The record gives the reactivity of an RNA of 207 nucleotides to 2A3 and DMS. The reactions ran in a buffer of 150 mM KOAc, 10 mM MgCl2 and 150 mM bicine (pH 8.5), at 24 C. Reactivities are given for positions 27 through 156.
RNA sequence: GGGAACGACUCGAGUAGAGUCGAAAAAGGGGGUGAUCUGUCUGCCCCUCACUGUUUUCUCCAAAUAGAGAUAAGAUCUCACUAUAUUGCCCUGGCUGGUCUCAAACUCCCGUGUUCAAGUCAUCUGCCUGCCUCGACCUCCUAAAGGGCAAGCGGAUACUAUCGGAGGAUUCGUCCUCCGAUAGUAAAAAGAAACAACAACAACAAC
Reactivity to 2A3 in 0.01 (KOAc 150mM, MgCl2 10mM, bicine 150mM(pH8.5), 24C), signal-to-noise 2, nucleotides 027 to 156: a010g030g010g000g010g000u050g030a060u000c030u070g130u050c050u060g070c020c040c010c000u040c040a050c020u060g060u080u020u020u000c050u010c000c040a030a100a060u120a100g050a010g010a030u050a140a120g080a070u000c000u090c000a040c060u090a050u060a060u300u140g050c080c000c000u010g070g000c010u040g010g010u060c020u000c040a030a050a030c030u030c030c000c010g040u040g030u020u050c070a060a050g060u080c000a010u000c000u020g030c020c010u000g060c000c000u030c080g090a070c000c070u080c000c000u110a150a060a060g040g000g000c000a010a000g020c010g030g000a010
Reactivity to DMS in 0.01 (KOAc 150mM, MgCl2 10mM, bicine 150mM(pH8.5), 24C), signal-to-noise 1, nucleotides 027 to 156: a080g020g000g010g110g010u010g040a040u000c090u010g010u000c070u000g020c030c000c010c000u000c010a070c070u020g030u000u000u000u000c010u010c030c020a040a150a140u010a080g000a050g000a040u000a090a210g010a300u000c000u000c010a080c080u010a140u000a080u000u020g030c000c000c000u000g000g020c060u010g030g010u000c010u000c060a090a110a090c050u000c000c000c000g020u000g020u000u000c050a070a160g020u000c020a060u000c020u000g020c020c010u000g000c010c040u000c000g010a040c030c000u020c020c010u020a010a300a040g010g000g050c000a020a010g020c030g020g020a190
DMS (dimethyl sulfate) methylates the pairing face of unpaired adenines and cytosines. Values are in units of 0.01, from 0 to 300, in steps of 10. For DMS the reverse transcriptase was MarathonRT. The 2A3 profile rests on 789 reads.